[RMDB]
RNA sequence: GGGAACGACUCGAGUAGAGUCGAAAAUACUGCGCGCCACUUUCGGGUCACGCUGGAUGUAGCCUUUGUUCUCGAGGGCGGUCAGGCGCUGCUGGAUGGCGAACUGGCGGACGCCGGCCUUGGCUGCCCUGUGUCUGUAAUUCGUUACAGACACAGGAAAAGAAACAACAACAACAAC
Reactivity to 2A3 in 0.01 (KOAc 150mM, MgCl2 10mM, bicine 150mM(pH8.5), 24C), signal-to-noise 4, nucleotides 027 to 126: u120a020c040u040g050c030g000c010g030c080c000a040c010u040u100u100c080g080g000g000u060c060a040c070g040c030u050g020g030a070u080g050u120a010g010c000c020u040u060u100g050u070u010c030u010c050g030a080g020g000g000c040g010g000u030c040a080g040g020c040g000c030u010g000c010u040g020g070a130u070g060g090c050g040a130a050c030u020g020g000c000g020g040a070c020g010c020c000g020g030c000c000u040u060g020g000c020u030g030c000
Reactivity to DMS in 0.01 (KOAc 150mM, MgCl2 10mM, bicine 150mM(pH8.5), 24C), signal-to-noise 5, nucleotides 027 to 126: u010a140c090u000g010c040g010c050g020c020c030a110c080u000u000u000c070g010g000g000u000c090a080c170g000c030u000g010g010a070u000g000u010a130g020c010c020u000u000u010g010u000u000c020u000c030g010a070g000g010g020c010g010g020u000c030a070g020g020c030g010c030u010g020c030u000g000g000a120u010g010g000c050g010a070a190c030u000g000g000c030g010g010a100c040g030c010c030g010g000c060c050u000u010g010g010c020u000g000c050